[RMDB]
RNA sequence: GGGAACGACUCGAGUAGAGUCGAAAACAGACCAAGUUCGCUUGGUCUGAAAGAAAGCGGAAAGCACCAGGGAGGGAAGGUGCGGGCCGCAACCACCCUUAAAAAGUACGAUCUUCGGAUCGUACAAUCAUAUUUGCUCGUUCGCGAGCAAAUAUGAAAAAGAAACAACAACAACAAC
Reactivity to DMS in 0.01 (KOAc 150mM, MgCl2 10mM, bicine 150mM(pH8.5), 24C), signal-to-noise 2, nucleotides 027 to 126: c020a020g000a030c000c000a020a010g020u010u010c220g030c010u000u000g000g000u000c000u000g000a010a080a050g010a120a070a100g000c000g000g000a040a060a240g010c000a020c000c010a110g000g030g010a120g000g000g040a220a160g000g000u000g010c000g000g020g000c020c000g030c000a040a080c160c080a180c020c000c000u010u020a030a020a040a110a140g000u000a000c010g000a010u000c010u000u020c220g040g010a000u000c000g040u000a000c000a040a080
Reactivity to 2A3 in 0.01 (KOAc 150mM, MgCl2 10mM, bicine 150mM(pH8.5), 24C), signal-to-noise 3, nucleotides 027 to 126: c000a000g000a000c000c000a000a000g020u030u070c100g010c120u000u000g010g000u000c010u000g010a000a000a000g050a010a050a000g010c010g010g010a040a040a010g000c000a000c010c010a070g060g100g050a140g040g040g030a070a070g020g000u000g000c000g010g050g010c010c000g000c000a000a000c010c010a010c010c000c000u090u100a130a150a020a020a020g000u000a000c000g000a010u000c000u040u070c220g070g000a010u000c000g000u000a000c000a000a000
About this RNA
The data come from the RNA Mapping Database (RMDB), library M2PK50. Structure probing data (DMS and 2A3) for a 177-nucleotide construct. The 2A3 profile rests on 7,424 reads.